[RMDB]
RNA sequence: GGGAACGACUCGAGUAGAGUCGAAAAAUACAUACUGACACCGGUUGCUCAACAGGCUGUGUGGGACAAUAGAAUAACAAGACUGUCAAUUUGAGCUUGACGGCUGCAAACCGAAUGGAGUGAAAUCGUAACCGGACUCACUUCGGUGAGUCCGGAAGAAAGGAUUAUUCUUCGGAAUAAUCCUUUCAAAAGAAACAACAACAACAAC
Reactivity to 2A3 in 0.01 (KOAc 150mM, MgCl2 10mM, bicine 150mM(pH8.5), 24C), signal-to-noise 1, nucleotides 027 to 156: a030u140a030c030a040u140a040c010u120g150a080c030a030c060c060g180g000u060u050g000c010u000c050a000a070c060a180g010g000c000u000g080u000g020u060g110g090g050a010c040a000a090u100a090g100a070a030u190a080a000c030a020a000g080a000c010u010g000u070c030a070a060u060u130u140g000a020g030c000u020u020g050a040c020g050g000c050u060g000c050a050a050a080c030c000g060a120a020u170g030g020a010g020u100g020a030a070a050u100c130g010u060a060a070c060c000g000g000a000c000u000c000a010c000u000u060c090g020g000u010g000a010g010u010c000c000g000g000a000a000
Reactivity to DMS in 0.01 (KOAc 150mM, MgCl2 10mM, bicine 150mM(pH8.5), 24C), signal-to-noise 1, nucleotides 027 to 156: a050u000a170c050a120u000a220c060u010g020a060c020a050c030c020g000g020u000u010g010c000u000c090a080a100c050a120g020g000c010u020g020u000g020u010g000g030g020a050c060a080a070u000a190g020a090a070u000a090a110c050a080a080g010a020c060u000g010u000c010a040a080u000u010u000g010a130g000c130u000u010g020a110c020g020g000c020u010g000c050a060a140a040c040c000g000a060a110u000g000g000a080g010u010g020a060a090a140u010c060g010u010a140a180c030c000g020g000a090c000u000c000a040c020u000u010c300g010g050u000g010a030g000u000c000c030g000g020a000a020
Source: RMDB library M2RFPK, as collected in RNAgym. An RNA of 207 nucleotides, treated with 2A3 and DMS and read out base by base. For DMS the reverse transcriptase was MarathonRT. The 2A3 profile rests on 531 reads. For 2A3 the reverse transcriptase was SuperScript II with manganese. For DMS, 1,585 sequencing reads were counted. Reactivities are given for positions 27 through 156. Conditions: 150 mM KOAc, 10 mM MgCl2 and 150 mM bicine (pH 8.5), 24 C.